The data come from the RNA Mapping Database (RMDB), library RFM100.
This 177-nucleotide RNA was probed chemically with 2A3.
For 2A3, 539 sequencing reads were counted.
The reactions ran in a buffer of 150 mM KOAc, 10 mM MgCl2 and 150 mM bicine (pH 8.5), at 24 C.

RNA sequence: GGGAACGACUCGAGUAGAGUCGAAAAGCACCAAUGCUCUGAGGCUGUCGCGUGGUGCAGCGUCGAGCAUCCUCGCCGAGGUCCUUUCUGCUGCCUGUCCCGCCUCACCCCGCUCCAUCACACCAGCUGGGGGCAACCUUUUCGAAGGUUGCCCCCAAAAAGAAACAACAACAACAAC
Reactivity to 2A3 in 0.01 (KOAc 150mM, MgCl2 10mM, bicine 150mM(pH8.5), 24C), signal-to-noise 1, nucleotides 027 to 126: g000c020a020c110c040a010a020u020g000c030u030c150u240g000a000g000g060c000u000g000u030c050g030c020g090u090g020g050u110g000c020a000g000c000g300u030c010g000a000g000c020a020u060c000c010u030c080g090c010c020g050a070g050g020u060c030c040u070u070u070c060u070g060c010u030g060c000c000u010g050u000c000c000c010g030c000c000u000c000a050c000c020c010c010g020c000u000c030c000a100u070c020a020c010a000c000c000a010g070c030